[RMDB]
RNA sequence: GGGAACGACUCGAGUAGAGUCGAAAAGAGCUGUAGUACAGCAAGAAGCACGCGAUCCUUGGCACCGCGUGCAAGACAAUUAGGCCGGCAAAGAAGGAAAGCCGGCAUAAGUGCCAAGUAAGAGAGAGGUAUGAGGUAAUUUCGAUUACCUCAUACCAAAAGAAACAACAACAACAAC
Reactivity to 2A3 in 0.01 (KOAc 150mM, MgCl2 10mM, bicine 150mM(pH8.5), 24C), signal-to-noise 4, nucleotides 027 to 126: g140a010g000c020u010g000u070a040g070u130a130c010a000g020c020a030a010g130a040a010g010c010a010c010g000c000g010a040u100c040c000u000u000g010g000c010a000c000c010g000c010g010u000g000c000a000a000g040a010c050a000a030u160u090a090g080g040c010c010g010g000c040a110a090a120g180a090a060g150g060a190a090a000g000c000c000g000g000c000a010u000a000a010g000u000g000c000c030a010a010g020u030a060a030g080a000g010a010g010a000
Reactivity to DMS in 0.01 (KOAc 150mM, MgCl2 10mM, bicine 150mM(pH8.5), 24C), signal-to-noise 3, nucleotides 027 to 126: g000a100g050c000u010g000u000a070g040u030a300c020a000g010c020a120a040g020a060a200g000c000a010c000g020c000g020a090u000c120c000u010u000g020g000c020a010c000c000g000c030g040u020g020c010a050a050g020a220c140a040a220u020u010a060g020g000c020c020g000g000c010a110a030a080g040a250a110g000g010a100a220a120g000c000c000g000g000c030a000u000a010a020g000u000g000c000c000a020a050g000u110a060a090g000a050g000a150g050a200
The record gives the reactivity of an RNA of 177 nucleotides to 2A3 and DMS. The 2A3 profile rests on 6,984 reads. In probing experiments dimethyl sulfate is read out at A N1 and C N3, which are open when not base-paired. For 2A3 the reverse transcriptase was SuperScript II with manganese. For DMS the reverse transcriptase was MarathonRT. The reactions ran in a buffer of 150 mM KOAc, 10 mM MgCl2 and 150 mM bicine (pH 8.5), at 24 C.